[RMDB]
RNA sequence: GGGAACGACUCGAGUAGAGUCGAAAACAGUUGUCUGAUCCUAAUUAUGAUGCCUUGUUGAUUUCUAUGACUAAUCAUAGUUUCAGUGUGCAAAAACACAUUGGCGCUCCAGCAAACUUGCGUGUUGACCGUGGUGAGUUCGCUCACCACAAAAGAAACAACAACAACAAC
Reactivity to 2A3 in 0.01 (KOAc 150mM, MgCl2 10mM, bicine 150mM(pH8.5), 24C), signal-to-noise 4, nucleotides 027 to 129: c010a000g010u040u060g040u090c000u000g050a050u060c000c000u000a050a030u090u060a140u220g110a040u120g020c000c060u070u070g070u070u020g080a280u100u030u040c010u000a050u060g020a060c040u140a060a000u120c010a080u030a080g000u000u010u080c000a000g000u020g010u000g050c050a040a030a020a040a010c030a010c010a030u000u020g020g000c010g000c000u020c060c000a060g030c000a020a070a130c030u060u120g040c020g070u020g080u060u090g010a020c050c000
Reactivity to DMS in 0.01 (KOAc 150mM, MgCl2 10mM, bicine 150mM(pH8.5), 24C), signal-to-noise 4, nucleotides 027 to 129: c090a120g040u000u050g030u030c100u060g030a080u030c030c040u070a000a000u070u020a100u030g020a000u030g030c080c060u010u050g010u000u010g020a080u030u020u030c050u020a050u020g040a170c100u000a090a080u040c100a010u050a040g000u030u020u000c040a020g050u010g010u060g000c000a020a050a040a140a100c080a010c020a040u020u010g030g020c080g050c070u020c040c030a050g070c070a100a030a100c090u000u000g010c070g000u030g020u030u000g020a050c090c100
The record gives the reactivity of an RNA of 170 nucleotides to 2A3 and DMS. DMS (dimethyl sulfate) methylates the pairing face of unpaired adenines and cytosines. For 2A3, 3,942 sequencing reads were counted. Values are in units of 0.01, from 0 to 300, in steps of 10. The reactions ran in a buffer of 150 mM KOAc, 10 mM MgCl2 and 150 mM bicine (pH 8.5), at 24 C.